[RMDB]
RNA sequence: GGGAACGACUCGAGUAGAGUCGAAAAUCAUGCGUUGCUGACCCCCUGUUCUGAUGAGAAAGUCGACACUCGGCAACUGCGGCGCAUCAAGGCACGCGCCGAAAGCUUCUUCGGUGAGAAGCUCACCCUGACCCUCAGGAUUCGUCCUGAGGGUCAGAAAAGAAACAACAACAACAAC
Reactivity to DMS in 0.01 (KOAc 150mM, MgCl2 10mM, bicine 150mM(pH8.5), 24C), signal-to-noise 2, nucleotides 027 to 126: u010c070a080u000g000c050g000u000u000g000c050u020g000a220c040c050c000c060c040u000g000u000u000c000u000g000a050u000g010a000g060a070a160a130g000u000c050g030a150c300a130c040u010c070g010g000c050a040a200c150u020g000c020g060g000c050g000c020a130u080c110a120a050g000g080c030a060c250g040c040g020c050c000g000a000a130a010g000c050u000u010c000u030u010c120g020g060u060g000a030g010a000a020g000c000u000c000a080c020c060
Reactivity to 2A3 in 0.01 (KOAc 150mM, MgCl2 10mM, bicine 150mM(pH8.5), 24C), signal-to-noise 4, nucleotides 027 to 126: u120c040a030u160g070c020g020u020u040g040c010u030g030a110c010c000c000c000c050u020g060u060u060c110u110g050a030u070g020a020g170a130a090a020g040u050c000g030a020c000a020c060u010c020g010g000c030a020a030c050u050g020c000g000g000c000g000c010a020u070c120a100a110g090g000c060a010c120g040c010g000c020c000g010a120a060a000g000c000u040u000c000u060u100c080g090g020u200g040a010g030a030a000g010c010u010c010a090c000c010

Chemical mapping of a 177-nucleotide RNA with DMS and 2A3. It was measured as part of the RMDB library OK1LIB. Values are in units of 0.01, from 0 to 300, in steps of 10. In probing experiments dimethyl sulfate is read out at A N1 and C N3, which are open when not base-paired. Values cover nucleotides 27 to 126. High 2A3 reactivity points to a flexible backbone, as in loops and unpaired stretches. The RNA was probed in 150 mM KOAc, 10 mM MgCl2 and 150 mM bicine (pH 8.5) at 24 C. For DMS, 1,799 sequencing reads were counted.